Structure probing data (2A3 and DMS) for a 177-nucleotide construct. The reactions ran in a buffer of 150 mM KOAc, 10 mM MgCl2 and 150 mM bicine (pH 8.5), at 24 C. DMS (dimethyl sulfate) methylates the pairing face of unpaired adenines and cytosines. The DMS profile rests on 22,585 reads.

RNA sequence: GGGAACGACUCGAGUAGAGUCGAAAACUAAGGAGCGUGUGCUGACAACGGUCCUUCACGGUGCGAUGAACACGGCCGAUUACCAUUACGUGGGCUAGUUGUGUGCCGUGCUCCGUGGAUCGGAAAAGGUUGUCGCGUCUUUCGGGGCGCGACGACCAAAAGAAACAACAACAACAAC
Reactivity to 2A3 in 0.01 (KOAc 150mM, MgCl2 10mM, bicine 150mM(pH8.5), 24C), signal-to-noise 8, nucleotides 027 to 126: c030u040a040a070g020g000a010g020c010g000u020g010u130g030c050u090g070a010c010a030a010c010g020g030u010c000c000u030u040c050a040c010g020g010u140g060c020g030a080u070g060a060a000c030a000c000g000g000c000c000g000a020u030u080a070c030c030a060u100u120a060c120g030u100g000g000g030c040u060a170g020u020u020g040u020g050u120g030c010c000g010u020g010c010u000c000c000g000u030g020g020a070u100c030g050g010a030a100a060a060
Reactivity to DMS in 0.01 (KOAc 150mM, MgCl2 10mM, bicine 150mM(pH8.5), 24C), signal-to-noise 6, nucleotides 027 to 126: c030u000a060a080g000g000a010g000c020g000u000g000u040g010c020u010g010a030c030a050a030c010g000g010u010c000c030u020u010c120a120c040g020g010u000g000c010g020a110u020g000a120a110c170a080c030g000g000c010c010g010a140u040u030a060c150c110a110u030u030a120c200g000u020g000g000g010c070u000a040g020u000u000g020u010g010u010g000c000c000g000u000g000c010u010c010c010g000u010g000g000a110u000c040g000g000a070a050a110a060